The record gives the reactivity of an RNA of 177 nucleotides to DMS and 2A3. DMS adducts were read by reverse transcription with MarathonRT. The RNA was probed in 150 mM KOAc, 10 mM MgCl2 and 150 mM bicine (pH 8.5) at 24 C. The data come from the RNA Mapping Database (RMDB), library TTRDEL.

RNA sequence: GGGAACGACUCGAGUAGAGUCGAAAAGAUAUGGAACCCAAGAGCGGUAAUACGUGGUUUCGGAAACGAAACGUAACAUCGUGCCAGCUCUGUGGGUUCCUAAGUCAAAGCAACCUUCGGGUUGCAAGCUACUAGCUAACUUCGGUUAGCUAGUAGCAAAAGAAACAACAACAACAAC
Reactivity to DMS in 0.01 (KOAc 150mM, MgCl2 10mM, bicine 150mM(pH8.5), 24C), signal-to-noise 3, nucleotides 027 to 126: g000a070u000a300u010g020g010a010a010c010c000c010a110a010g010a010g040c000g000g010u000a130a110u020a080c030g000u000g000g020u000u000u000c000g000g000a150a080a240c000g010a010a010a020c010g000u010a090a080c100a040u010c040g020u000g000c020c010a160g050c010u000c020u000g030u010g000g000g000u000u000c000c000u000a000a100g020u000c040a060a080a210g000c000a000a010c010c000u000u010c220g000g010g000u000u010g020c010a030a020
Reactivity to 2A3 in 0.01 (KOAc 150mM, MgCl2 10mM, bicine 150mM(pH8.5), 24C), signal-to-noise 2, nucleotides 027 to 126: g000a000u050a050u190g000g000a020a000c000c010c000a000a010g000a000g000c000g030g060u070a120a080u120a290c010g000u030g010g000u000u000u020c000g010g010a050a040a020c000g010a000a020a000c010g000u050a030a060c020a180u200c030g020u010g070c020c060a120g010c030u000c000u010g290u090g060g000g000u010u000c000c000u010a010a000g000u000c020a030a050a080g000c010a010a020c000c000u040u060c300g110g000g000u000u000g000c010a000a010